The data come from the RNA Mapping Database (RMDB), library TTRDES. The record gives the reactivity of an RNA of 177 nucleotides to 2A3 and DMS. For DMS the reverse transcriptase was MarathonRT.

RNA sequence: GGGAACGACUCGAGUAGAGUCGAAAAGAUAUGGAUCCGUGUCGGGAGUCUACAGUCGGAAACGACUGCGGGACGAGGAUCGACCGGAUCCUAAGUCAAAAGCACUAGCAGUUCGCUGCUAGUGCAACAAAGUCUUUCAGUUCGCUGAAAGACUUUGAAAAGAAACAACAACAACAAC
Reactivity to 2A3 in 0.01 (KOAc 150mM, MgCl2 10mM, bicine 150mM(pH8.5), 24C), signal-to-noise 2, nucleotides 027 to 126: g000a010u020a010u070g000g000a000u000c000c010g010u090g010u170c000g020g040g040a130g030u020c010u020a020c010a010g010u000c000g000g030a000a000a000c000g000a010c000u020g020c190g270g030g000a000c010g020a200g110g050a130u030c010g000a000c020c000g000g000a010u010c000c000u000a000a000g000u000c000a000a000a070a210g000c010a000c010u020a010g000c020a000g010u110u280c300g100c230u000g010c000u000a010g000u000g000c000a000a000
Reactivity to DMS in 0.01 (KOAc 150mM, MgCl2 10mM, bicine 150mM(pH8.5), 24C), signal-to-noise 2, nucleotides 027 to 126: g000a000u000a040u000g000g000a000u000c000c010g010u010g000u000c000g000g010g000a040g010u000c000u010a090c000a010g010u000c000g020g000a010a000a020c000g000a010c000u010g000c080g010g010g000a020c000g000a140g030g010a080u000c010g020a010c010c010g000g000a010u000c000c000u000a000a060g000u010c010a110a090a150a190g010c000a000c000u000a010g010c000a000g030u000u020c300g030c000u000g020c000u000a000g010u000g010c010a040a060